[RMDB]
RNA sequence: GGGAACGACUCGAGUAGAGUCGAAAAGUGGUACCGCUCAUCGUAAACCUCUACGCCUUCGGCGCCAGGGAUUUCGACCUCAAAUCCGCGCUGCACUACAUGGUGAAUGCAGCGACCCAGGGCGGUGCAAUCGCAGGAAUUUCGAUUCCUGCGAUUGAAAAGAAACAACAACAACAAC
Reactivity to 2A3 in 0.01 (KOAc 150mM, MgCl2 10mM, bicine 150mM(pH8.5), 24C), signal-to-noise 9, nucleotides 027 to 126: g160u120g020g020u040a010c010c000g000c010u010c010a070u020c020g160u180a010a050a070c000c010u030c030u050a010c010g010c000c010u160u210c250g010g000c020g040c120c130a030g010g000g020a020u020u040u030c040g020a040c010c020u090c060a070a080a060u040c010c020g010c000g000c020u010g010c000a010c030u200a050c070a250u300g160g020u240g130a050a050u030g000c000a000g000c000g010a010c010c010c020a030g010g000g000c000g010g000u000g000
Reactivity to DMS in 0.01 (KOAc 150mM, MgCl2 10mM, bicine 150mM(pH8.5), 24C), signal-to-noise 9, nucleotides 027 to 126: g020u010g010g010u010a010c010c000g010c000u000c010a290u010c010g010u040a010a030a030c060c010u000c010u000a220c010g000c010c010u030u040c230g000g010c010g030c160c180a030g000g010g010a080u000u010u000c020g010a050c140c050u010c080a040a070a060u020c040c040g000c000g000c000u000g000c000a010c040u010a070c050a220u040g010g030u030g010a070a090u000g000c000a010g000c010g010a050c040c010c030a070g000g000g000c010g000g000u000g010